[RMDB]
RNA sequence: GGGAACGACUCGAGUAGAGUCGAAAAUGUGAAUCGCCUCCCACGCUUUAUUUAAAUCUGGGUGUUGACGUUGCCAAUGCAAUAGCUGAUUUUGAUAUGCACCGCGUAGAUGAUCGAUCGCGUUACGCGUUUCUGAGCCGUUCGCGGCUCAGAAACGAAAAGAAACAACAACAACAAC
Reactivity to DMS in 0.01 (KOAc 150mM, MgCl2 10mM, bicine 150mM(pH8.5), 24C), signal-to-noise 1, nucleotides 027 to 126: u020g010u010g030a090a110u010c010g030c080c050u000c010c000c040a180c130g020c080u010u000u000a030u010u000u000a030a080a050u000c000u030g000g010g020u020g000u000u000g030a070c190g020u000u010g000c010c160a070a080u000g000c030a050a040u000a130g000c050u020g000a120u000u000u000u000g020a050u000a040u000g010c030a030c120c110g000c040g020u000a070g010a100u000g010a110u000c040g000a070u000c100g010c050g010u000u000a090c110g020
The record gives the reactivity of an RNA of 177 nucleotides to DMS.